This 177-nucleotide RNA was probed chemically with DMS and 2A3.

[RMDB]
RNA sequence: GGGAACGACUCGAGUAGAGUCGAAAAGGGGAAAAGGAAAAACUCUGCUUCAAUGUGGCCAUCAAACCUCCAGAGCUUUGCACUGGUUUUGUGACCCACCAGCGGAACGCCACAAGGUUUGCUCCAAGACUACGCUAUGAUUCGUCAUAGCGUAGUCAAAAGAAACAACAACAACAAC
Reactivity to DMS in 0.01 (KOAc 150mM, MgCl2 10mM, bicine 150mM(pH8.5), 24C), signal-to-noise 3, nucleotides 027 to 126: g000g010g020g010a100a090a090a090g010g000a050a060a050a070a090c090u010c030u000g000c050u000u010c110a110a090u010g010u000g020g000c030c080a040u010c050a050a040a050c170c070u010c040c030a040g000a180g020c020u000u000u010g030c050a080c010u000g000g010u000u000u000u000g020u000g000a150c120c030c030a050c060c080a060g020c040g000g000a040a060c110g000c010c030a040c080a080a060g010g010u000u000u000g000c100u000c030c060a070a150
Reactivity to 2A3 in 0.01 (KOAc 150mM, MgCl2 10mM, bicine 150mM(pH8.5), 24C), signal-to-noise 1, nucleotides 027 to 126: g020g000g000g000a010a050a010a060g070g040a080a080a030a040a000c020u020c030u060g000c000u050u100c060a050a040u130g020u040g040g000c010c000a050u080c040a060a020a040c010c010u030c030c040a000g010a010g030c050u090u140u220g030c040a030c020u040g000g000u010u000u060u080g110u080g020a010c000c010c010a050c040c020a010g020c010g010g020a060a010c070g030c020c010a070c020a020a010g030g040u070u010u110g030c000u000c000c010a060a000
The reactions ran in a buffer of 150 mM KOAc, 10 mM MgCl2 and 150 mM bicine (pH 8.5), at 24 C. The 2A3 profile rests on 1,528 reads.